[RMDB]
RNA sequence: GGGAACGACUCGAGUAGAGUCGAAAACCGUAGGGAAUUUAGAGCUUGGAUUUACCAUCGAAAUUACAUUCGAAAGAGUGUAACACGAUGGUUGUCAGCUCUGAAAUUCCCUAAACGGAAAACGAUACAUGUUGUAUUCGUACAACAUGUAUCGUAAUGCAGAUUAUGGAUUCGUCCAUAAUCUGCAAAAAGAAACAACAACAACAAC
Reactivity to DMS in 0.01 (KOAc 150mM, MgCl2 10mM, bicine 150mM(pH8.5), 24C), signal-to-noise 2, nucleotides 027 to 156: c000c010g000u000a030g020g000g020a020a000u000u010u000a040g010a010g020c010u000u010g040g020a050u000u000u000a040c000c000a020u000c010g000a130a130a250u000u000a010c000a030u000u000c000g020a260a150a280g010a030g040u000g000u000a000a020c060a300c020g030a010u010g000g000u000u000g000u010c000a050g010c000u000c000u020g010a010a010a040u000u000c000c000c000u000a000a010a130c010g000g000a090a060a060a050c000g030a010u000a010c000a000u000g000u000u000g000u000a050u000u000c300g030u000a010c010a010a030c020a000u000g010u010a000u000c020g010u000a010a050
Reactivity to 2A3 in 0.01 (KOAc 150mM, MgCl2 10mM, bicine 150mM(pH8.5), 24C), signal-to-noise 4, nucleotides 027 to 156: c000c000g010u040a020g000g000g000a010a000u010u010u010a030g000a000g000c060u150u170g260g010a110u300u260u200a010c000c000a010u010c010g010a110a130a010u010u000a000c000a010u010u010c010g060a090a050a060g000a040g000u010g010u000a000a020c060a010c090g000a000u000g010g000u000u000g000u000c000a000g000c000u000c000u000g000a000a000a000u000u010c000c000c000u000a000a010a000c000g030g040a100a110a010a020c000g020a000u010a000c000a000u000g000u000u000g000u000a030u030u120c300g060u080a000c000a000a000c000a000u000g000u000a000u000c000g000u000a000a000